Conditions: 150 mM KOAc, 10 mM MgCl2 and 150 mM bicine (pH 8.5), 24 C. The record gives the reactivity of an RNA of 177 nucleotides to DMS and 2A3. 2A3 adducts were read by reverse transcription with SuperScript II with manganese. The 2A3 profile rests on 44,989 reads.
RNA sequence: GGGAACGACUCGAGUAGAGUCGAAAAUCAAGUGUAGGAUGUCAACUAUGCUGAUAUUGUACACGAAGUAUGUAAGCAUAGAUAGACUACAUACUCAUUAGUCAGUAGUCUAUAUGAACUGACUGAAGAUAGUAUUCUGAUUCGUCAGGAUACUAUCAAAAGAAACAACAACAACAAC
Reactivity to DMS in 0.01 (KOAc 150mM, MgCl2 10mM, bicine 150mM(pH8.5), 24C), signal-to-noise 9, nucleotides 027 to 126: u040c080a080a110g010u000g000u000a010g000g010a060u010g010u010c040a070a170c040u000a020u010g000c010u000g010a060u010a020u020u010g000u010a010c050a070c140g010a160a100g000u020a040u020g010u020a090a070g010c010a020u000a030g000a060u010a030g000a050c010u000a010c000a070u020a060c050u010c200a100u020u020a050g010u000c100a090g010u000a040g010u000c040u000a030u010a070u020g010a070a080c110u010g000a070c020u010g000a100a100
Reactivity to 2A3 in 0.01 (KOAc 150mM, MgCl2 10mM, bicine 150mM(pH8.5), 24C), signal-to-noise 9, nucleotides 027 to 126: u100c030a080a080g020u000g010u030a020g020g070a060u060g020u030c010a010a030c060u010a000u020g000c000u000g020a020u020a050u100u130g200u040a010c080a010c080g070a120a030g100u100a050u190g130u100a050a020g000c000a010u010a010g020a030u050a010g010a010c010u010a000c000a030u060a020c020u060c080a140u090u190a010g020u020c050a010g000u030a020g030u000c020u040a100u020a040u190g050a050a050c040u050g060a020c020u020g020a050a010